[RMDB]
RNA sequence: GGGAACGACUCGAGUAGAGUCGAAAAAGCCGCCGCCGACACCGCAGAGCCGGCGCGCGCACUCACAAGCGGCAGAGGCAGAAAGGCCCAGAGUCAUUGUUUAUGUGGCCGCGGGCCAGCAGACGGCCUCUUACUGGUUCUUCGGAACCAGUAAGAGAAAAGAAACAACAACAACAAC
Reactivity to DMS in 0.01 (KOAc 150mM, MgCl2 10mM, bicine 150mM(pH8.5), 24C), signal-to-noise 2, nucleotides 027 to 126: a090g000c110c010g020c040c040g020c010c030g020a110c090a020c010c100g000c120a130g020a100g060c160c030g000g020c040g000c100g020c080g000c080a110c080u030c050a060c130a130a140g000c020g020g000c040a030g000a250g010g020c000a150g010a020a110a070g000g020c000c020c010a090g000a160g010u000c000a030u000u010g020u010u000u000a040u030g030u000g000g020c000c010g000c300g010g000g020c010c000a050g010c120a150g010a050c030g020g000c010
Source: RMDB library OK2TRN, as collected in RNAgym. Chemical mapping of a 177-nucleotide RNA with DMS. DMS (dimethyl sulfate) methylates the pairing face of unpaired adenines and cytosines. For DMS the reverse transcriptase was MarathonRT. Reactivities are given for positions 27 through 126. Conditions: 150 mM KOAc, 10 mM MgCl2 and 150 mM bicine (pH 8.5), 24 C.